[RMDB]
RNA sequence: GGGAACGACUCGAGUAGAGUCGAAAACCUGACACGUUCGCGUGUCAGGAAACGUCGCUCCGAGAAAUACGCUGGCGUCGCGACGGACCCGACGCUAGCGUAAAACGCCCGACUUCGGUCGGGCGAACUAUAGAUAGUACUUCGGUACUAUCUAUAGAAAAGAAACAACAACAACAAC
Reactivity to 2A3 in 0.01 (KOAc 150mM, MgCl2 10mM, bicine 150mM(pH8.5), 24C), signal-to-noise 4, nucleotides 027 to 126: c000c000u000g010a000c000a000c010g040u050u070c260g000c000g140u000g000u000c000a000g000g050a060a050a000c050g040u030c020g020c020u060c070c080g040a080g100a160a150a030u070a020c000g000c000u000g000g010c000g000u000c010g010c060g080a090c040g080g130a080c030c020c000g000a000c000g000c010u010a000g000c000g000u010a000a000a000a010c020g000c000c000c010g000a010c000u040u050c220g080g000u010c000g000g000g010c000g000a000a000
Reactivity to DMS in 0.01 (KOAc 150mM, MgCl2 10mM, bicine 150mM(pH8.5), 24C), signal-to-noise 5, nucleotides 027 to 126: c000c000u000g000a010c000a020c000g010u000u010c190g030c020g040u000g000u000c010a000g000g000a010a040a070c150g000u000c020g020c020u000c050c040g010a160g010a100a100a130u000a010c010g010c010u000g000g010c000g000u000c010g010c100g000a120c080g010g000a110c110c060c000g000a010c000g010c010u000a010g010c000g010u000a000a010a070a180c030g010c000c000c000g000a010c000u000u010c140g040g010u000c000g010g000g010c000g000a000a040
This 177-nucleotide RNA was probed chemically with 2A3 and DMS. For DMS the reverse transcriptase was MarathonRT. Source: RMDB library M2PK50, as collected in RNAgym. For 2A3 the reverse transcriptase was SuperScript II with manganese. Conditions: 150 mM KOAc, 10 mM MgCl2 and 150 mM bicine (pH 8.5), 24 C.